About this RNA:
Conditions: 150 mM KOAc, 10 mM MgCl2 and 150 mM bicine (pH 8.5), 24 C. Structure probing data (2A3 and DMS) for a 207-nucleotide construct. For 2A3 the reverse transcriptase was SuperScript II with manganese. Reactivities are given for positions 27 through 156. DMS adducts were read by reverse transcription with MarathonRT. The 2A3 profile rests on 2,390 reads.
RNA sequence: GGGAACGACUCGAGUAGAGUCGAAAAGAAGGGUGAAAGCCCUUGAUCCUGUAGUGGAAAUUAUAAAUAAGAAGAGUUCUGAGUUGCUUAAGCAGAACUAAAAUAAAAAGACAAGCAUUAUUACAAACAUGGCGAGGUAAGUUCGCUUACCUCGCAAUCUGUAAUUAAAGUUCGCUUUAAUUACAGAAAAAGAAACAACAACAACAAC
Reactivity to 2A3 in 0.01 (KOAc 150mM, MgCl2 10mM, bicine 150mM(pH8.5), 24C), signal-to-noise 3, nucleotides 027 to 156: g040a000a000g000g010g000u030g030a060a030a020g020c020c020c020u000u000g020a060u020c000c010u010g110u120a050g030u040g010g060a040a040a040u140u120a110u160a230a140a050u180a030a050g030a060a070g040a020g070u000u000c010u000g030a020g070u110u150g080c040u120u040a140a030g030c010a000g010a010a000c060u040a040a020a000a010u080a020a040a020a000a000g040a010c020a020a010g000c000a000u000u050a060u050u140a180c060a060a080a010c050a080u090g090g000c000g000a000g000g000u000a000a000g010u040u040c110g000c070u010u000a000c000c000u010c000g000c000a000a000
Reactivity to DMS in 0.01 (KOAc 150mM, MgCl2 10mM, bicine 150mM(pH8.5), 24C), signal-to-noise 1, nucleotides 027 to 156: g010a000a040g010g040g020u010g000a190a060a290g000c000c000c010u000u010g000a080u000c000c030u020g010u010a100g030u000g020g000a050a040a070u010u030a010u010a070a060a130u000a100a150g000a110a180g010a080g010u000u000c030u000g010a100g000u000u000g000c040u000u000a070a160g030c030a080g010a070a030c010u010a050a060a060a090u010a070a130a100a080a140g010a100c070a010a050g050c030a050u010u010a040u010u000a100c170a070a040a040c040a080u010g060g060c030g020a030g000g000u030a030a010g000u010u000c290g030c020u000u000a010c000c000u000c000g010c000a000a010